[RMDB]
RNA sequence: GGGAACGACUCGAGUAGAGUCGAAAACCCUUCGACGCUAGGGAGGUCUUCAUUUAAUUGAAACGCAGGAGCGGACCUUGAAUAGUUGUGUGAACCUUCUAUUCUCAUCGGAAACGAUGCCCUUGCCAUAGCAUCAAGUCUUCGGACUUGAUGCUAUAAAAGAAACAACAACAACAAC
Reactivity to DMS in 0.01 (KOAc 150mM, MgCl2 10mM, bicine 150mM(pH8.5), 24C), signal-to-noise 3, nucleotides 027 to 126: c000c000c000u020u010c130g010a070c250g040c040u000a010g030g000g000a030g010g020u000c010u000u000c010a020u020u010u000a110a300u010u010g000a010a200a280c030g030c000a200g000g000a190g000c010g010g000a020c000c010u010u010g000a000a000u000a000g000u000u000g020u000g000u050g000a120a270c170c010u010u010c000u000a000u000u000c000u000c030a010u000c000g000g010a070a110a140c000g000a000u000g000c030c000c000u000u010g000c010c190
Reactivity to 2A3 in 0.01 (KOAc 150mM, MgCl2 10mM, bicine 150mM(pH8.5), 24C), signal-to-noise 3, nucleotides 027 to 126: c000c000c000u050u130c080g060a030c010g020c020u040a000g010g000g000a010g020g000u000c000u010u000c040a050u010u090u110a140a100u050u050g050a010a050a040c050g000c050a110g030g280a130g110c000g000g000a000c000c000u010u000g000a000a000u000a010g010u000u010g030u010g080u060g140a080a100c010c000u010u000c010u000a000u000u000c010u000c010a000u000c000g000g020a090a020a050c000g000a000u000g000c000c000c000u000u020g000c020c020

Structure probing data (DMS and 2A3) for a 177-nucleotide construct.
It was measured as part of the RMDB libraries RFM100 and RFMREP.
Conditions: 150 mM KOAc, 10 mM MgCl2 and 150 mM bicine (pH 8.5), 24 C.
Values cover nucleotides 27 to 126.